[RMDB]
RNA sequence: GGGAACGACUCGAGUAGAGUCGAAAAGAGCUGAAGUACAGCAAGAACGACGACAUCCUUGGCAAAGCGUCGAAGAUAAGCGUGCCGAUUGCCAAGGAUUAACGGCACGCGAGGCGAAGACGCCAGAGAUUACGGCCCUGUUCGCAGGGCCGUAAUCAAAAGAAACAACAACAACAAC
Reactivity to DMS in 0.01 (KOAc 150mM, MgCl2 10mM, bicine 150mM(pH8.5), 24C), signal-to-noise 1, nucleotides 027 to 126: g030a040g000c030u030g000a000a130g060u060a240c000a080g000c000a160a140g000a070a090c060g000a050c000g000a160c130a000u080c040c040u010u000g000g070c000a060a000a170g000c110g010u000c060g000a170a180g000a030u010a030a090g000c010g140u000g000c000c000g000a240u000u070g030c000c000a000a020g000g000a000u000u000a000a220c020g030g030c000a000c000g050c000g030a080g030g000c000g110a090a110g010a180c000g000c000c090a070g010a090
Reactivity to 2A3 in 0.01 (KOAc 150mM, MgCl2 10mM, bicine 150mM(pH8.5), 24C), signal-to-noise 3, nucleotides 027 to 126: g100a000g010c040u040g000a150a050g050u250a160c000a010g000c000a010a050g090a080a030c110g040a010c000g030a020c010a050u020c000c000u010u020g000g000c010a070a060a030g110c030g070u120c060g070a030a000g090a140u300a150a050g010c000g000u000g000c000c000g100a280u130u060g000c000c000a000a000g000g020a000u000u010a000a000c000g000g000c000a000c000g010c020g000a040g010g020c030g080a120a030g090a100c000g010c000c000a050g060a000
Chemical mapping of a 177-nucleotide RNA with DMS and 2A3.
Values are in units of 0.01, from 0 to 300, in steps of 10.
2A3 is a SHAPE reagent: it acylates the 2'-hydroxyl of flexible nucleotides of all four kinds.
The 2A3 profile rests on 1,438 reads.
The RNA was probed in 150 mM KOAc, 10 mM MgCl2 and 150 mM bicine (pH 8.5) at 24 C.